[RMDB]
RNA sequence: GGGAACGACUCGAGUAGAGUCGAAAAUAUUUGGAGAGAAAAGGCAUGAUUGAGGUUGCGACUUUUUCGUUUUUGCUUUUGCAUGGAUAAUUCAUCCAUGCACAUCUCACUUUAUUGGACCUUCAAGCCGAAUUAUCAACUUCGGUUGAUAAUUCGGAAAAGAAACAACAACAACAAC
Reactivity to 2A3 in 0.01 (KOAc 150mM, MgCl2 10mM, bicine 150mM(pH8.5), 24C), signal-to-noise 1, nucleotides 027 to 126: u020a020u020u060u090g050g010a130g010a000g000a020a030a080a060g030g020c000a020u020g010a050u060u100g040a050g010g050u070u010g050c060g050a090c040u020u010u000u040u010c010g010u030u040u020u090u060g020c000u000u040u080u000g010c000a000u040g000g050a050u010a100a100u300u110c120a010u020c010c000a000u000g040c000a000c010a000u010c010u010c000a060c020u020u010u050a020u040u110g050g060a080c020c000u040u030c160a030a060g030
Reactivity to DMS in 0.01 (KOAc 150mM, MgCl2 10mM, bicine 150mM(pH8.5), 24C), signal-to-noise 1, nucleotides 027 to 126: u000a000u000u000u000g020g010a060g000a090g000a060a130a040a110g000g030c030a100u000g020a020u010u000g040a040g000g010u010u010g020c160g020a040c040u000u020u030u000u010c030g000u000u000u000u010u050g030c060u000u030u000u000g000c000a010u000g000g000a010u000a060a120u010u020c180a070u000c000c000a000u050g000c020a040c170a040u000c010u010c030a220c070u000u000u000a020u020u000g010g000a170c030c060u020u000c150a110a110g000
Notes: Source: RMDB library RFMREP, as collected in RNAgym. The record gives the reactivity of an RNA of 177 nucleotides to 2A3 and DMS. The reactions ran in a buffer of 150 mM KOAc, 10 mM MgCl2 and 150 mM bicine (pH 8.5), at 24 C. For 2A3 the reverse transcriptase was SuperScript II with manganese.